[RMDB]
RNA sequence: GGGAACGACUCGAGUAGAGUCGAAAACAUCUAACAAGAUCAAGUAAAUUAGCGAGCAACGAAUUUUAGCUUAUUGGGUUGGGAGUCUCCGUUUUCUAAGAAAUUUACGGCAUCCUGAUUAAGAACGUACUUGAAAAAGAUUCGUCUUUUUCAAGUAAAAAGAAACAACAACAACAAC
Reactivity to 2A3 in 0.01 (KOAc 150mM, MgCl2 10mM, bicine 150mM(pH8.5), 24C), signal-to-noise 9, nucleotides 027 to 126: c020a050u070c020u120a060a060c050a100a040g040a060u090c030a050a040g090u130a160a070a090u080u090a020g060c030g030a010g030c050a030a100c060g110a070a090u060u090u070u130a090g010c030u050u070a040u100u160g080g010g000u050u020g030g020g010a040g060u020c040u010c050c010g010u030u010u040u040c040u040a080a020g080a060a100a020u140u160u080a020c000g000g000c020a030u010c000c010u030g030a080u140u100a090a030g020a090a000c050g040
Reactivity to DMS in 0.01 (KOAc 150mM, MgCl2 10mM, bicine 150mM(pH8.5), 24C), signal-to-noise 9, nucleotides 027 to 126: c100a060u010c040u010a070a090c120a070a090g000a040u010c070a130a120g000u000a040a040a050u010u010a070g010c080g000a070g020c300a050a060c070g020a060a080u020u000u010u010a090g010c040u000u010a050u020u010g010g010g020u000u000g000g010g010a070g000u010c050u010c060c050g000u010u000u000u010c050u010a060a090g000a060a050a040u010u000u010a040c060g010g010c180a040u000c010c030u000g010a070u020u010a050a070g010a050a090c180g010